[RMDB]
RNA sequence: GGGAACGACUCGAGUAGAGUCGAAAAUGCCUGUCGUGGUGUUUUUCGAUAGGAUCGUGGGAACAGACGAGUGUACAUGAGGAGCGGAGCAUGAAACUGAAAGGUGAUCUCCCCGUCGGGGAUCAAGCUCCAUGCCUAUCUUCGGAUAGGCAUGGAGAAAAGAAACAACAACAACAAC
Reactivity to 2A3 in 0.01 (KOAc 150mM, MgCl2 10mM, bicine 150mM(pH8.5), 24C), signal-to-noise 1, nucleotides 027 to 126: u060g010c000c020u010g080u050c050g060u070g040g070u000g100u080u110u010u100u140c030g060a030u020a050g110g000a050u040c040g080u090g030g020g000a030a020c020a020g080a010c000g030a040g080u070g040u130a090c040a060u090g060a020g070g010a020g000c070g000g060a000g000c040a070u110g140a060a070a010c070u050g040a030a030a010g120g010u030g040a040u000c040u100c080c000c010c080g230u170c140g010g010g060g020a010u030c030a000a010g050
Reactivity to DMS in 0.01 (KOAc 150mM, MgCl2 10mM, bicine 150mM(pH8.5), 24C), signal-to-noise 1, nucleotides 027 to 126: u000g010c000c000u000g000u010c120g000u010g030g030u000g010u030u000u000u030u030c030g020a060u010a090g000g010a170u000c060g010u010g000g000g010a090a150c090a090g000a060c040g030a040g000u000g000u000a090c090a150u030g000a090g020g010a130g010c090g010g000a080g000c020a140u000g020a040a060a070c110u000g010a030a020a090g000g050u000g000a020u000c040u000c000c000c030c180g010u000c120g040g000g040g000a030u000c040a030a090g000